[RMDB]
An RNA of 177 nucleotides, treated with DMS and 2A3 and read out base by base. The reactions ran in a buffer of 150 mM KOAc, 10 mM MgCl2 and 150 mM bicine (pH 8.5), at 24 C. 2A3 adducts were read by reverse transcription with SuperScript II with manganese. Reactivities are given for positions 27 through 126. Source: RMDB library OK2TRN, as collected in RNAgym.

RNA sequence: GGGAACGACUCGAGUAGAGUCGAAAAUCUGAAGUGACAGGAUUAGGUCCUGACAUCAUACAAGCUAACUCCAUGUACUCUUUCUAUGGUGAUGAUGAGAUUGUGAGCACAGACAUAAAAUUGGACCGAGAUCCUAUUGAUUCGUCAAUAGGAUCUCAAAAGAAACAACAACAACAAC
Reactivity to DMS in 0.01 (KOAc 150mM, MgCl2 10mM, bicine 150mM(pH8.5), 24C), signal-to-noise 5, nucleotides 027 to 126: u010c040u010g020a120a150g020u000g020a090c030a050g000g010a040u000u010a120g020g010u000c010c010u000g000a120c090a040u010c050a070u000a100c130a090a080g010c060u000a070a110c050u000c020c030a030u000g010u010a050c070u000c090u000u000u010c090u010a060u010g010g010u000g020a060u000g010a060u000g000a090g010a060u000u000g020u000g010a070g010c030a090c060a030g000a060c100a050u000a030a030a060a130u000u000g010g010a140c160c120
Reactivity to 2A3 in 0.01 (KOAc 150mM, MgCl2 10mM, bicine 150mM(pH8.5), 24C), signal-to-noise 6, nucleotides 027 to 126: u030c020u030g050a130a020g040u020g050a030c020a020g040g000a040u080u180a090g150g050u010c010c010u010g030a040c010a040u060c010a010u030a120c040a080a020g010c020u060a040a050c020u000c020c010a030u060g030u080a090c020u030c020u100u140u030c070u100a100u160g050g030u060g040a080u070g000a010u030g000a020g030a110u100u120g030u040g060a020g000c020a010c000a060g080a020c030a050u190a060a110a040a100u110u090g030g020a010c030c010
Record summary: For DMS the reverse transcriptase was MarathonRT.